[RMDB]
Source information:
An RNA of 177 nucleotides, treated with 2A3 and DMS and read out base by base. For 2A3, 10,569 sequencing reads were counted. For DMS, 16,322 sequencing reads were counted. For 2A3 the reverse transcriptase was SuperScript II with manganese. The RNA was probed in 150 mM KOAc, 10 mM MgCl2 and 150 mM bicine (pH 8.5) at 24 C.
RNA sequence: GGGAACGACUCGAGUAGAGUCGAAAAGCUCGGUGACACCGCGUCUGCCUGGGUCCGAAAGAUUUCUUGUCGCAAAUCUACAAGACAUUGGUUAACGUGUGGGCCGCUUGAGCGGCCGCUCGGCGGGAGUUGCGAUGGUGUUCGCGCCGUUGCAACUAAAAGAAACAACAACAACAAC
Reactivity to 2A3 in 0.01 (KOAc 150mM, MgCl2 10mM, bicine 150mM(pH8.5), 24C), signal-to-noise 5, nucleotides 027 to 126: g010c010u000c020g010g020u040g030a020c020a010c040c010g010c010g020u000c020u040g020c010c000u030g030g000g020u000c000c000g030a060a030a010g010a000u020u010u000c020u050u100g080u060c050g020c080a010a020a080u020c000u020a020c020a040a010g010a000c010a020u010u070g020g020u040u080a040a010c010g010u020g010u070g030g030g000c010c000g000c000u090u150g020a020g000c000g010g010c000c010g000c000u020c010g040g000c000g010g020g010
Reactivity to DMS in 0.01 (KOAc 150mM, MgCl2 10mM, bicine 150mM(pH8.5), 24C), signal-to-noise 5, nucleotides 027 to 126: g000c020u000c030g010g010u010g010a110c100a070c020c030g000c030g020u020c060u010g010c010c010u010g010g000g000u000c010c020g010a130a110a070g000a030u000u010u010c020u010u020g000u010c160g000c170a030a040a050u010c010u000a050c160a140a060g000a020c040a060u010u010g000g010u010u010a070a120c030g010u000g010u010g010g010g000c010c000g000c000u020u030g010a080g010c010g000g000c020c030g000c010u010c030g000g010c020g000g000g010